[RMDB]
RNA sequence: GGGAACGACUCGAGUAGAGUCGAAAAGGAUUAUUCUGGGAAGAAGGAGAUGAGCAAACGGCGCAGAUAUGGACUGCAGAUAAAAGUUUUGCUUCUAAGUUAGAGUCAACUUUAGCUCGCUUGUGUCGACGGGUAUACUCUUCGGAGUAUACCCGUCAAAAGAAACAACAACAACAAC
Reactivity to DMS in 0.01 (KOAc 150mM, MgCl2 10mM, bicine 150mM(pH8.5), 24C), signal-to-noise 1, nucleotides 027 to 126: g000g000a190u000u000a100u020u000c040u010g000g000g020a080a090g010a050a040g020g000a090g020a070u000g000a060g040c080a020a070a120c070g000g000c150g030c050a040g000a060u020a110u020g010g010a110c010u000g020c000a070g010a050u000a050a080a030a080g010u020u000u010u000g010c030u000u000c100u000a040a070g000u030u000a080g010a030g000u000c190a030a080c100u010u000u010a060g000c020u000c020g000c050u010u010g000u000g000u010c090
Reactivity to 2A3 in 0.01 (KOAc 150mM, MgCl2 10mM, bicine 150mM(pH8.5), 24C), signal-to-noise 1, nucleotides 027 to 126: g000g000a030u110u060a050u160u120c030u020g120g000g000a000a100g020a070a040g040g070a020g040a110u150g030a000g000c050a000a000a110c020g040g000c060g000c010a000g020a020u190a100u210g120g040a050c030u000g040c000a030g030a120u200a110a130a020a020g000u000u000u080u120g000c000u100u000c000u030a130a000g070u060u130a040g000a040g120u110c000a000a080c010u020u080u080a000g010c020u010c020g030c070u060u090g010u040g070u140c010

This 177-nucleotide RNA was probed chemically with DMS and 2A3. For 2A3, 736 sequencing reads were counted. The DMS profile rests on 1,131 reads. In probing experiments dimethyl sulfate is read out at A N1 and C N3, which are open when not base-paired. Values cover nucleotides 27 to 126.